[RMDB]
RNA sequence: GGGAACGACUCGAGUAGAGUCGAAAAAUCCGUAGUAAUCGCAUUUCAAAACAGUGCGGUGAAUACGUCCCUGCUCCUUGCACACACCGCCCGUCAAACCACCCGAGCGGGGCGUGAAUGAGGAUCCGUAGGAAGGUUUAUUCGUAAACCUUCCUACAAAAGAAACAACAACAACAAC
Reactivity to DMS in 0.01 (KOAc 150mM, MgCl2 10mM, bicine 150mM(pH8.5), 24C), signal-to-noise 8, nucleotides 027 to 126: a070u020c150c010g010u010a040g000u010a180a010u010c000g010c000a010u000u000u020c140a100a070a100a120c300a020g020u000g000c000g010g000u000g000a140a230u020a010c020g000u010c020c000c000u010g010c110u000c010c050u000u000g000c080a030c030a030c030a040c020c020g010c010c020c010g000u020c100a060a090a090c130c100a080c080c080c030g010a060g010c010g010g010g000g010c030g010u010g000a050a090u020g010a070g000g000a050u030c110c140
Reactivity to 2A3 in 0.01 (KOAc 150mM, MgCl2 10mM, bicine 150mM(pH8.5), 24C), signal-to-noise 9, nucleotides 027 to 126: a000u060c040c010g010u010a010g000u020a010a010u000c000g000c010a010u020u060u100c240a160a140a070a080c080a050g010u000g010c000g010g000u010g010a020a030u040a010c010g070u070c000c000c000u010g030c010u020c010c010u020u060g010c040a010c000a000c000a020c050c020g030c020c010c000g090u120c060a070a110a170c050c030a040c020c040c020g010a020g040c020g010g000g000g000c030g010u020g020a060a100u140g010a030g020g010a040u040c050c080